[RMDB]
RNA sequence: GGGAACGACUCGAGUAGAGUCGAAAAAGGGAGAAAAAAGCUCACAGUAGAGGGAGUCAACAACCUUUAUUGUAGAGGAAUGAAAGGUUUUGCUACCCCUGGUAUGUACAGAUUAAAUUCAAAGGAAUGCACGAUAUUUUUUCGAAAAUAUCGUGCAAAAAGAAACAACAACAACAAC
Reactivity to DMS in 0.01 (KOAc 150mM, MgCl2 10mM, bicine 150mM(pH8.5), 24C), signal-to-noise 2, nucleotides 027 to 126: a050g010g010g000a130g030a020a080a130a030a090a130g000c020u000c000a020c030a070g000u010a030g030a010g000g000g000a070g000u040c220a090a050c210a100a070c010c000u000u000u000a000u010u000g020u000a140g010a030g010g020a080a070u020g010a070a090a090g000g020u000u000u000u000g010c030u010a140c060c010c020c030u000g020g010u010a050u000g010u040a070c130a130g000a070u000u010a020a050a080u010u000c050a070a150a150g000g000a110a140
Conditions: 150 mM KOAc, 10 mM MgCl2 and 150 mM bicine (pH 8.5), 24 C. This 177-nucleotide RNA was probed chemically with DMS. It was measured as part of the RMDB library OK2TRN.